Structure probing data (2A3 and DMS) for a 177-nucleotide construct. Source: RMDB library M2PK50, as collected in RNAgym.
[RMDB]
RNA sequence: GGGAACGACUCGAGUAGAGUCGAAAAGUUGAAGUGUUCGCACUUCAACAAACGCUCAACUCAUGGAGCGCAAGACGAUUAGCUACAUAUUCGACAUGAGAAAAAGACUGUAGUUCGCUACAGUCAAGUUGUUCUUAUCGUUCGCGAUAAGAACAACAAAAGAAACAACAACAACAAC
Reactivity to 2A3 in 0.01 (KOAc 150mM, MgCl2 10mM, bicine 150mM(pH8.5), 24C), signal-to-noise 3, nucleotides 027 to 126: g000u000u000g000a000a010g000u000g030u070u100c180g040c070a000c000u010u000c000a000a010c000a010a020a000c010g010c000u000c010a030a050c020u010c000a030u020g000g000a000g000c030g000c170a130a010g070a040c030g030a040u060u090a030g090c090u180a080c060a200u160a110u040u090c010g030a010c010a010u010g000a010g000a080a020a000a010a000g000a000c000u000g020u000a000g000u020u070c200g010c070u010a010c000a000g020u000c000a000a000
Reactivity to DMS in 0.01 (KOAc 150mM, MgCl2 10mM, bicine 150mM(pH8.5), 24C), signal-to-noise 2, nucleotides 027 to 126: g010u000u000g010a010a040g030u000g020u000u030c220g030c020a010c000u000u010c000a020a000c010a110a050a170c010g000c000u000c000a130a130c020u000c000a010u010g000g000a000g020c000g000c060a110a040g010a060c030g000a050u000u000a030g020c160u020a080c160a110u000a080u000u000c040g010a100c000a010u020g000a030g010a110a100a150a070a070g000a010c000u010g000u000a000g000u000u000c200g030c000u000a010c000a020g000u000c000a010a040